[RMDB]
RNA sequence: GGGAACGACUCGAGUAGAGUCGAAAAGUUUACGCUCCAAGAUCCGUGGAUAGCAGCCCUAUCAAUAUCUAGGAGAACUGUGCUAUGUUUAGAAGAUUAGGUAGUCUCUAAACAGAACAAUUUACCUCAUACGUUAGGACGUUCGCGUCCUAACGAACAAUCAGGCAUUGUUCGCAAUGCCUGAUUGAAAAGAAACAACAACAACAAC
Reactivity to 2A3 in 0.01 (KOAc 150mM, MgCl2 10mM, bicine 150mM(pH8.5), 24C), signal-to-noise 8, nucleotides 027 to 156: g020u050u080u120a050c040g000c020u000c010c010a010a020g020a060u050c130c110g180u150g120g010a020u020a020g030c090a040g010c020c010c010u020a050u030c030a050a050u030a010u180c020u030a040g010g020a030g020a060a040c090u130g020u030g060c030u060a030u100g000u020u000u000a080g010a300a010g000a040u050u040a030g020g030u030a010g010u000c000u000c000u010a010a000a010c010a010g040a040a020c100a020a030u060u060u070a040c000c010u070c060a080u080a170c010g000u000u000a000g010g000a000c000g010u020u050c250g010c010g090u000c000c000u000a000a000c000g000a010a010
Reactivity to DMS in 0.01 (KOAc 150mM, MgCl2 10mM, bicine 150mM(pH8.5), 24C), signal-to-noise 3, nucleotides 027 to 156: g050u000u000u010a070c080g010c020u020c020c000a100a150g020a050u010c120c090g000u010g040g020a050u000a030g000c020a230g010c230c160c000u020a100u000c030a080a110u000a120u000c040u010a170g030g030a270g000a040a060c040u000g000u000g030c020u010a180u010g020u000u010u000a020g010a060a130g030a010u000u010a130g040g030u000a130g010u000c050u000c000u000a020a010a040c000a050g000a070a020c020a060a050u010u000u000a100c020c010u000c050a140u010a180c020g030u000u000a020g000g010a000c000g020u000u000c280g050c070g030u000c000c000u000a000a010c000g000a030a100